[RMDB]
The data come from the RNA Mapping Database (RMDB), library OK2TRN.
Structure probing data (DMS and 2A3) for a 177-nucleotide construct.
For 2A3 the reverse transcriptase was SuperScript II with manganese.
The 2A3 profile rests on 1,341 reads.
The RNA was probed in 150 mM KOAc, 10 mM MgCl2 and 150 mM bicine (pH 8.5) at 24 C.
RNA sequence: GGGAACGACUCGAGUAGAGUCGAAAAGGCUACUUGGGAAUGCCCAUUGAGUGCUGGGGUGCCAGGAGGAAGGGUACAAAACAAGAAAAAUAGGUCACAGUCCAUCAGAUAAGCUGAGACUUUGUUCGGCAUUCUUAAAGUUCGCUUUAAGAAUGCCAAAAGAAACAACAACAACAAC
Reactivity to DMS in 0.01 (KOAc 150mM, MgCl2 10mM, bicine 150mM(pH8.5), 24C), signal-to-noise 2, nucleotides 027 to 126: g010g020c080u000a070c050u000u030g030g000g010a210a120u000g020c030c010c010a110u020u030g010a070g040u010g000c130u000g000g010g000g000u010g000c030c010a050g000g000a060g020g010a120a070g020g010g000u020a080c120a030a050a050a130c180a090a020g000a020a050a030a080a100u020a040g000g010u000c010a110c030a020g000u000c070c070a070u000c090a060g000a190u000a040a170g020c020u000g000a040g030a050c030u000u000u000g030u000u000c150
Reactivity to 2A3 in 0.01 (KOAc 150mM, MgCl2 10mM, bicine 150mM(pH8.5), 24C), signal-to-noise 2, nucleotides 027 to 126: g000g000c000u010a020c060u100u020g000g000g020a140a060u130g100c000c000c050a000u020u180g110a060g010u130g000c020u040g000g000g000g070u040g060c040c020a050g000g030a050g000g030a080a070g000g020g010u090a060c050a030a120a000a010c070a040a070g160a080a190a000a020a020u200a050g020g050u000c010a010c010a060g010u080c070c020a060u090c030a040g070a230u150a230a000g030c020u030g040a030g000a020c000u080u050u030g060u080u060c060